The data come from the RNA Mapping Database (RMDB), libraries RFM100 and RFMREP. Structure probing data (DMS and 2A3) for a 177-nucleotide construct. 2A3 adducts were read by reverse transcription with SuperScript II with manganese. For 2A3, 5,448 sequencing reads were counted. For DMS the reverse transcriptase was MarathonRT. Values cover nucleotides 27 to 126.
RNA sequence: GGGAACGACUCGAGUAGAGUCGAAAAGGGUCUUAUUCUCAUAUGCCCCCGCAAGCGAGGGCCUGGUCGAUUAGUGAGACCAGGUGCGACGCGGGGGCUACAGCCCGGCCUCAGCGAGGUCCCCUCGAUUCGUGUGAAGAUUCGUCUUCACACGAAUAAAAGAAACAACAACAACAAC
Reactivity to DMS in 0.01 (KOAc 150mM, MgCl2 10mM, bicine 150mM(pH8.5), 24C), signal-to-noise 5, nucleotides 027 to 126: g000g000g000u020c100u020u030a070u010u010c080u000c100a140u010a130u030g010c000c000c000c000c000g000c000a150a220g010c050g010a080g030g010g000c000c000u010g000g010u000c000g010a300u020u050a140g020u020g030a300g000a000c000c000a000g010g020u000g000c000g000a110c170g010c010g010g000g000g000g000c000u000a000c130a080g000c020c010c010g000g000c010c010u000c020a180g010c150g000a050g010g010u000c000c000c000c000u000c070g000
Reactivity to 2A3 in 0.01 (KOAc 150mM, MgCl2 10mM, bicine 150mM(pH8.5), 24C), signal-to-noise 5, nucleotides 027 to 126: g030g010g010u070c060u090u130a150u200u090c100u040c090a060u100a050u260g000c000c000c000c000c000g000c010a090a130g100c010g050a060g020g150g010c000c000u000g000g010u000c000g060a150u160u170a190g160u140g190a090g010a030c000c000a000g000g000u020g020c000g000a020c050g000c010g010g000g000g000g000c000u000a000c000a010g020c010c010c000g010g000c000c000u030c030a120g100c060g070a010g010g010u020c000c000c000c020u030c030g050